[RMDB]
Chemical mapping of a 177-nucleotide RNA with DMS and 2A3.
2A3 adducts were read by reverse transcription with SuperScript II with manganese.

RNA sequence: GGGAACGACUCGAGUAGAGUCGAAAACACGCAGAGCCCGCCGAUCAGUUUCUACUGGCUAUCGAUUAACCACAUUCGAGCCAUACAUGCCGAUGUUAGUCAAUGAUAGCGUUCAAUCCGUAGGUGGCUGUCGCUAAAUGUUCGCAUUUAGCGACAGAAAAGAAACAACAACAACAAC
Reactivity to DMS in 0.01 (KOAc 150mM, MgCl2 10mM, bicine 150mM(pH8.5), 24C), signal-to-noise 2, nucleotides 027 to 126: c060a180c140g000c070a200g020a270g060c060c080c040g020c070c020g000a070u010c070a050g010u000u000u000c090u010a080c040u010g000g000c000u010a000u000c010g000a110u010u000a070a020c050c220a100c040a020u000u000c050g020a090g060c020c140a110u010a150c260a070u000g020c010c010g000a030u010g000u000u000a030g000u000c060a090a040u010g000a020u000a000g000c010g020u000u000c070a070a110u040c040c120g000u000a100g020g040u000g000g010
Reactivity to 2A3 in 0.01 (KOAc 150mM, MgCl2 10mM, bicine 150mM(pH8.5), 24C), signal-to-noise 1, nucleotides 027 to 126: c050a010c020g020c040a040g030a070g210c000c010c000g000c020c010g020a130u110c020a040g000u020u050u020c060u030a110c000u020g080g000c010u080a030u030c030g090a020u000u080a050a010c040c030a060c020a100u090u110c070g050a070g070c050c050a070u110a200c090a040u270g030c000c020g010a000u060g010u010u080a040g000u000c030a050a010u200g020a040u030a030g000c030g020u030u130c030a060a070u120c020c040g000u000a040g000g000u030g070g000

For 2A3, 909 sequencing reads were counted.